The record gives the reactivity of an RNA of 177 nucleotides to 2A3 and DMS. Source: RMDB library OK2TRN, as collected in RNAgym. The reactions ran in a buffer of 150 mM KOAc, 10 mM MgCl2 and 150 mM bicine (pH 8.5), at 24 C. Values cover nucleotides 27 to 126. For 2A3 the reverse transcriptase was SuperScript II with manganese.
[RMDB]
RNA sequence: GGGAACGACUCGAGUAGAGUCGAAAAACACGAGUCAGCUCAGACUUGUGCGAGUACCGAUUCUGCAAUCGGUGCAGAGUCUAGACUACGCUGUCUGGACUAGUAAGUGAUUGCAGAAUCACUUGCAUGACUAUUAAAUGUUCGCAUUUAAUAGUCAAAAAGAAACAACAACAACAAC
Reactivity to 2A3 in 0.01 (KOAc 150mM, MgCl2 10mM, bicine 150mM(pH8.5), 24C), signal-to-noise 9, nucleotides 027 to 126: a000c010a000c020g010a000g000u000c010a040g040c130u080c180a050g010a020c000u020u030g020u010g020c020g010a010g010u040a080c040c070g000a000u000u000c000u010g000c000a000a010u000c010g170g050u050g000c020a060g030a000g260u000c000u010a000g000a000c030u090a080c270g110c290u070g000u000c000u010g000g000a000c010u000a010g040u030a040a200g150u020g090a000u000u010g000c010a000g000a000a000u000c000a000c020u020u060g020c040a100
Reactivity to DMS in 0.01 (KOAc 150mM, MgCl2 10mM, bicine 150mM(pH8.5), 24C), signal-to-noise 9, nucleotides 027 to 126: a060c020a040c010g000a010g010u000c000a150g020c240u010c260a140g000a020c010u000u000g010u000g000c010g000a100g010u000a130c110c050g000a010u000u000c020u000g000c020a020a010u000c010g010g000u000g010c050a140g010a040g010u000c000u000a010g010a020c010u000a140c300g010c220u000g010u000c000u000g010g000a010c000u000a060g010u000a060a060g010u000g010a010u000u000g000c060a020g000a010a010u000c000a030c060u000u000g010c120a190